[RMDB]
RNA sequence: GGGAACGACUCGAGUAGAGUCGAAAAGCGUACUACGCUGGGCCCUGAGACAUGCUCGAUUCUAGCGAAUCCCAAAUAGGAUUCGCUUCUAUCGAGCAACAGCUCAGGGUUACAGCGUAUCGCAAAAUCAACUUGAUGGUUCGCCAUCAAGUUGAAACAUAAACGAUAACUUCGGUUAUCGUUUAUGAAAAGAAACAACAACAACAAC
Reactivity to DMS in 0.01 (KOAc 150mM, MgCl2 10mM, bicine 150mM(pH8.5), 24C), signal-to-noise 4, nucleotides 027 to 156: g010c020g020u000a050c080u000a000c010g010c010u010g010g000g000c020c010c000u000g000a020g020a080c080a300u010g000c000u000c000g020a030u000u000c010u000a010g030c010g010a020a010u000c000c000c030a060a220a220u000a070g000g000a060u000u000c010g010c000u000u000c000u000a010u000c010g030a020g010c000a010a010c060a120g010c010u000c000a020g000g020g030u000u000a020c000a020g000c000g020u000a000u000c020g010c020a100a050a100a140u000c000a010a010c000u000u000g010a020u000g020g000u000u000c300g010c020c000a010u000c000a010a010g010u010u000g000a010a090a210
Reactivity to 2A3 in 0.01 (KOAc 150mM, MgCl2 10mM, bicine 150mM(pH8.5), 24C), signal-to-noise 6, nucleotides 027 to 156: g000c000g020u090a080c050u010a010c040g000c000u000g000g020g010c000c000c000u000g010a000g010a040c070a130u050g000c000u000c000g010a010u040u010c040u060a000g000c010g010a000a000u040c030c030c070a210a300a130u300a120g010g000a000u000u000c000g000c000u000u000c000u000a000u000c000g000a000g000c000a000a000c000a000g010c000u000c000a000g010g010g000u040u060a070c000a000g000c010g000u000a010u070c000g000c000a030a030a000a150u020c000a000a000c000u000u000g000a000u010g000g070u050u060c240g050c070c000a000u000c010a000a000g000u000u000g000a000a000a000

Structure probing data (DMS and 2A3) for a 207-nucleotide construct. The reactions ran in a buffer of 150 mM KOAc, 10 mM MgCl2 and 150 mM bicine (pH 8.5), at 24 C. The 2A3 profile rests on 17,654 reads. Reactivities are given for positions 27 through 156. 2A3 adducts were read by reverse transcription with SuperScript II with manganese.